[RMDB]
RNA sequence: GGGAACGACUCGAGUAGAGUCGAAAAGAACCAGGCUCUAUCUCCUGCAAUUCAAAACCUUUCCCAAGAUAGGGAUGCGAAGACCAGCCGCUUUCCCUCUCCGCCGCCGCAACGCGGUCUUGCCAGAGCCGCCAUGAUCAUUCGUGAUCAUGGCGGCAAAAGAAACAACAACAACAAC
Reactivity to 2A3 in 0.01 (KOAc 150mM, MgCl2 10mM, bicine 150mM(pH8.5), 24C), signal-to-noise 2, nucleotides 027 to 126: g030a040a030c210c010a020g000g000c040u060c050u100a120u090c020u020c030c000u020g050c040a080a160u030u090c030a030a080a070a120c040c000u010u010u020c000c000c000a050a040g040a110u180a040g000g010g010a060u100g040c020g030a050a010g030a210c040c050a030g050c070c000g000c030u070u050u040c020c000c000u000c020u050c040c020g050c020c000g000c000c000g100c040a070a060c020g040c010g040g010u060c010u010u000g040c000c020a030g030a020